[RMDB]
An RNA of 207 nucleotides, treated with 2A3 and DMS and read out base by base. It was measured as part of the RMDB library RNAMAK. The reactions ran in a buffer of 150 mM KOAc, 10 mM MgCl2 and 150 mM bicine (pH 8.5), at 24 C.

RNA sequence: GGGAACGACUCGAGUAGAGUCGAAAACGCUGGGAGAACCGACAGAGCUAGCGAACUGAAGCGCGCACGGUUCGCUUGGACCUCUGUUCGGUUGUCCUGUGCUGAAGCGCGCACGGCAACCGAAAGGUGCGAGGAUCCUCUGUUUCGACAGAGGAAACAACCACUGAUAAUUCGUUAUCAGUGGUUGAAAAGAAACAACAACAACAAC
Reactivity to 2A3 in 0.01 (KOAc 150mM, MgCl2 10mM, bicine 150mM(pH8.5), 24C), signal-to-noise 3, nucleotides 027 to 156: c060g010c040u060g010g020g000a070g010a040a000c000c000g010a010c010a010g020a000g040c050u080a000g000c000g010a010a000c020u030g040a240a060g050c040g010c010g020c080a010c030g000g030u020u000c000g000c000u010u110g050g100a150c020c010u000c020u030g050u150u070c000g000g000u020u000g010u010c000c000u040g040u060g010c010u050g020a110a030g010c000g010c000g000c030a010c020g030g000c030a040a070c030c010g090a100a030a010g050g000u020g020c030g020a060g060g090a080u030c000c000u000c000u000g030u010u130u110c220g040a030c010a000g000a000g000g000a020a010a000
Reactivity to DMS in 0.01 (KOAc 150mM, MgCl2 10mM, bicine 150mM(pH8.5), 24C), signal-to-noise 2, nucleotides 027 to 156: c010g050c030u000g000g000g010a100g020a030a000c000c010g000a060c010a050g020a010g030c100u000a070g040c050g020a010a000c010u000g000a010a060g050c050g010c040g030c010a300c050g020g010u010u000c010g010c030u000u010g020g010a060c300c050u000c000u020g020u010u010c030g060g000u000u000g000u000c000c020u000g010u010g020c020u000g030a040a050g030c070g010c020g000c010a300c050g000g010c010a050a060c040c030g020a080a100a130g010g000u010g010c000g000a170g000g010a120u000c000c000u010c000u000g000u000u000u000c210g010a090c000a010g020a010g000g000a000a030a090